Description:
The data come from the RNA Mapping Database (RMDB), library M2RFPK. Structure probing data (2A3) for a 207-nucleotide construct. The 2A3 profile rests on 656 reads.

[RMDB]
RNA sequence: GGGAACGACUCGAGUAGAGUCGAAAAGUGCCUCGUCGGCCCGGCAUGCCAACCUGAUCCGAAGUUCAAGGUGGUUUCUCUGGCCUUCCAGAGAGAUGCGCGGCGGAAGAACCGACGAACAAACCUUAAAACAAAACGACGUUCGCGUCGUUUUGAAGCUUCGGUUAUUGUUCGCAAUAACCGAAGCAAAAGAAACAACAACAACAAC
Reactivity to 2A3 in 0.01 (KOAc 150mM, MgCl2 10mM, bicine 150mM(pH8.5), 24C), signal-to-noise 1, nucleotides 027 to 156: g030u050g130c010c010u010c000g000u000c000g010g070c000c000c020g020g000c010a030u060g000c000c020a060a140c060c050u000g010a020u040c070c090g180a150a070g050u060u020c060a030a040g010g010u000g000g010u000u090u000c010u000c000u000g050g000c020c120u250u090c020c000a020g000a000g000a000g000a010u040g000c300g000c030g090g010c060g030g040a020a070g040a060a080c000c000g020a000c000g040a030a010c030a000a140a030c000c020u130u170a040a120a000a060c000a000a010a000a000c000g000a000c000g000u000u080c140g030c010g110u010c000g000u000u000u000u000g010a020a000
Conditions: 150 mM KOAc, 10 mM MgCl2 and 150 mM bicine (pH 8.5), 24 C.
Reactivities are given for positions 27 through 156.